[RMDB]
An RNA of 207 nucleotides, treated with 2A3 and read out base by base. The reactions ran in a buffer of 150 mM KOAc, 10 mM MgCl2 and 150 mM bicine (pH 8.5), at 24 C.
RNA sequence: GGGAACGACUCGAGUAGAGUCGAAAAUGCCGCAAGCUCAUCACCAUUCUUUGCGCUAUACCAAUCGUGAAUUACAACAAUGUCAUCGAGCAUGCUCUUAAUAUCCUUGAUGUCGAUAGGGUUCUUCAUGAUACCAUCUGUGAAGUGUCUAAGAUAGCCCAACACAGCAUUUCGAUGCUGUGUUGGGAAAAGAAACAACAACAACAAC
Reactivity to 2A3 in 0.01 (KOAc 150mM, MgCl2 10mM, bicine 150mM(pH8.5), 24C), signal-to-noise 1, nucleotides 027 to 156: u080g020c020c000g000c060a010a000g020c000u000c110a100u090c050a060c120c000a040u120u010c060u020u080u090g030c060g030c050u120a080u060a250c060c030a030a100u030c000g020u010g080a010a070u090u120a060c040a210a000c010a000a130u240g000u020c020a040u000c040g000a020g000c090a030u100g000c040u000c010u020u180a170a070u060a070u130c000c000u020u070g060a020u000g000u030c000g050a020u060a060g030g000g030u070u000c000u000u000c020a050u120g000a110u020a150c080c000a110u030c070u000g060u000g100a050a160g000u000g000u000c000u020a050a020g000a140u050a060g050

The data come from the RNA Mapping Database (RMDB), library OK3TST. For 2A3, 477 sequencing reads were counted. High 2A3 reactivity points to a flexible backbone, as in loops and unpaired stretches.